[RMDB]
RNA sequence: GGGAACGACUCGAGUAGAGUCGAAAACUUCGCAACUUCGGUUGCGAAGAAUGGCAGCUCGUCCCGGGGCUGGGUUCGCCGGGUUAUAAAACAUAACACAUCACUGGCUACCAUUCGUGGUAGCCAACCUCGAUAGCAAAUUCGUUUGCUAUCGAGGAAAAGAAACAACAACAACAAC
Reactivity to DMS in 0.01 (KOAc 150mM, MgCl2 10mM, bicine 150mM(pH8.5), 24C), signal-to-noise 2, nucleotides 027 to 126: c010u000u000c000g030c010a010a000c000u000u010c160g020g000u000u000g000c000g000a010a000g010a060a050u000g020g000c010a020g000c010u000c020g000u000c000c000c010g000g010g000g000c040u000g000g000g000u000u000c080g030c030c030g010g010g010u020u000a060u000a040a060a130a070c150a030u010a010a040c060a060c200a080u000c140a110c220u000g000g040c000u000a000c010c000a050u000u030c230g020u000g000g020u000a000g020c000c000a000a010
Reactivity to 2A3 in 0.01 (KOAc 150mM, MgCl2 10mM, bicine 150mM(pH8.5), 24C), signal-to-noise 1, nucleotides 027 to 126: c000u000u000c000g000c010a020a000c010u040u060c250g100g000u000u000g000c000g000a000a000g010a000a010u020g040g040c000a000g010c020u030c030g020u020c010c020c000g020g010g030g000c030u020g050g080g010u040u060c060g020c080c020g030g060g000u000u050a120u070a130a230a040a020c070a030u100a100a040c060a000c000a070u090c040a030c170u040g000g000c000u000a000c000c000a020u000u050c190g060u030g010g000u000a000g000c000c000a000a010